Chemical mapping of a 207-nucleotide RNA with 2A3 and DMS. 2A3 adducts were read by reverse transcription with SuperScript II with manganese. It was measured as part of the RMDB library OK3TST.
RNA sequence: GGGAACGACUCGAGUAGAGUCGAAAAGGUGAUUGUGAUACUCGCUACUGUCAUUCAUCGAAUGACAGUAUUAGACUGCUACAAUCACAUUUCGUGACUCAAUUAUUUAGCAGUCUAAUUGAUAACAUAACGCGAGAUAUGUUAAAGUCACGAAUCGUCCGCGUAAUAAUUUCGAUUAUUACGCGGAAAAAGAAACAACAACAACAAC
Reactivity to 2A3 in 0.01 (KOAc 150mM, MgCl2 10mM, bicine 150mM(pH8.5), 24C), signal-to-noise 5, nucleotides 027 to 156: g100g000u010g000a010u010u000g000u010g020a020u020a040c010u000c000g000c010u010a000c000u010g000u020c000a020u010u000c030a160u140c290g010a010a000u000g000a010c000a000g000u000a000u000u000a000g000a000c000u000g000c010u020a000c010a000a010u030c000a000c000a010u030u030u020c020g000u010g000a000c010u010c090a100a140u150u130a130u160u300u160a020g000c000a000g000u000c000u000a000a010u010u040g070a080u110a160a030c050a070u080a040a000c080g000c000g000a010g050a080u010a020u020g040u010u100a210a140a000g000u000c020a000c000g010a000a030u040c050g010
Reactivity to DMS in 0.01 (KOAc 150mM, MgCl2 10mM, bicine 150mM(pH8.5), 24C), signal-to-noise 2, nucleotides 027 to 156: g000g020u000g020a020u000u000g020u000g020a080u010a070c010u000c010g030c030u010a030c000u010g020u000c010a020u000u000c000a260u020c230g030a020a030u000g000a040c000a000g020u000a000u000u000a020g020a020c000u000g000c010u000a040c030a030a020u000c020a030c010a170u000u000u000c050g060u000g020a030c000u020c080a110a120u010u000a130u000u000u000a070g020c030a030g000u000c030u000a000a030u000u010g000a230u000a090a080c080a100u010a060a140c100g050c020g010a060g000a100u010a030u000g030u000u000a070a060a080g010u000c000a000c000g010a040a100u000c130g000
The RNA was probed in 150 mM KOAc, 10 mM MgCl2 and 150 mM bicine (pH 8.5) at 24 C.